[RMDB]
RNA sequence: GGGAACGACUCGAGUAGAGUCGAAAAUAAGAGCAAUAAAGUCGUCCUGUGUUAUCGUAUCUGCCGAAGCUGAGGUAGCUGACAGCGAGGAUGUAGCUACUUUUUCUGAGAAGUACCUGAUACCUGACAUAACCCGCAGUUUCGACUGCGGGUUAUGAAAAGAAACAACAACAACAAC
Reactivity to 2A3 in 0.01 (KOAc 150mM, MgCl2 10mM, bicine 150mM(pH8.5), 24C), signal-to-noise 1, nucleotides 027 to 126: u130a040a050g030a000g040c020a040a090u100a200a170a010g020u070c020g010u040c010c010u010g040u030g010u060u020a120u100c020g000u010a040u040c040u050g080c060c020g050a020a020g000c050u020g020a020g050g000u000a030g000c030u070g150a040c010a000g040c020g110a080g100g040a020u050g040u020a000g020c000u020a130c100u090u040u010u050u120c030u010g050a120g020a050a010g030u030a040c000c000u010g020a040u070a080c000c080u040g020a020
Reactivity to DMS in 0.01 (KOAc 150mM, MgCl2 10mM, bicine 150mM(pH8.5), 24C), signal-to-noise 2, nucleotides 027 to 126: u020a130a080g010a130g010c060a070a090u010a050a070a060g000u000c050g030u000c010c040u020g010u010g000u010u010a050u010c070g010u000a050u000c020u000g020c030c010g030a090a070g000c050u010g000a030g020g010u010a030g000c020u000g020a060c090a050g010c120g020a120g000g030a120u000g000u010a050g000c010u000a030c020u000u000u000u000u000c030u010g020a180g020a090a080g020u010a070c090c070u010g000a060u000a050c040c060u010g010a240
Background:
Chemical mapping of a 177-nucleotide RNA with 2A3 and DMS. DMS (dimethyl sulfate) methylates the pairing face of unpaired adenines and cytosines. The RNA was probed in 150 mM KOAc, 10 mM MgCl2 and 150 mM bicine (pH 8.5) at 24 C. DMS adducts were read by reverse transcription with MarathonRT. For DMS, 1,829 sequencing reads were counted. It was measured as part of the RMDB library OK2TST.